Source information
This 207-nucleotide RNA was probed chemically with 2A3. Reactivities are given for positions 27 through 156.
RNA sequence: GGGAACGACUCGAGUAGAGUCGAAAAGCCAGUCAGAGGGCGCUACCAUGCAAACUAGGGCUGGCUACUCGUGCACAGAAUCACCUUUCUAUAAUAACCAGUGCAAGAAGGGUUAUUAUACCAUUUAAAAAUCGUGAAUGCUUCGGCAUUCACGAAAGCCUGUAAAGAUCUUCGGAUCUUUACAGGCAAAAGAAACAACAACAACAAC
Reactivity to 2A3 in 0.01 (KOAc 150mM, MgCl2 10mM, bicine 150mM(pH8.5), 24C), signal-to-noise 1, nucleotides 027 to 156: g000c000c000a000g000u030c000a000g020a010g020g020g000c000g000c010u120a290c110c040a150u300g000c000a000a000a040c000u000a010g000g000g030c000u000g000g000c000u000a000c000u000c000g060u030g000c030a030c000a030g120a110a100u150c100a110c050c010u080u270u030c070u050a010u000a040a040u020a000a030c020c020a020g020u010g070c030a030a010g080a040a070g060g010g020u000u000a000u010u000a000u000a030c040c000a100u080u260u300a020a110a060a000a000u040c020g030u000g000a000a000u000g000c000u010u020c000g100g010c000a000u000u000c020a000c000g000a000a000a000